[RMDB]
RNA sequence: GGGAACGACUCGAGUAGAGUCGAAAAGGAUCUGUUACCGGAUUAUUGUCUUUAUCGAACAUUGCCGAUCCGUUAUAUCCGCAACCUUUACCGCUUCUAUACCAUCCUCUUUGCGCCCAAUAACAAACGCUUUGCGUGAGUCGUGGCGGGAUCAUAAGGUCCUAUCGUAUUUCGAUACGAUAGGACCAAAAGAAACAACAACAACAAC
Reactivity to 2A3 in 0.01 (KOAc 150mM, MgCl2 10mM, bicine 150mM(pH8.5), 24C), signal-to-noise 1, nucleotides 027 to 156: g000g040a010u040c040u180g040u120u020a020c070c120g000g020a040u050u120a060u030u300g040u050c030u030u300u080a140u120c100g040a130a080c030a080u040u040g140c150c010g050a010u000c010c010g040u050u070a070u040a060u090c060c020g000c040a050a120c010c000u130u050u220a000c000c030g000c030u000u070c060u130a090u020a150c050c030a070u050c050c010u060c060u020u040u140g000c010g000c000c010c000a110a080u220a100a070c100a050a060a030c120g000c000u150u130u140g020c030g010u160g010a000g010u060c010g030u030g000g000c100g020g000g000a020u250c040a070u060a050a090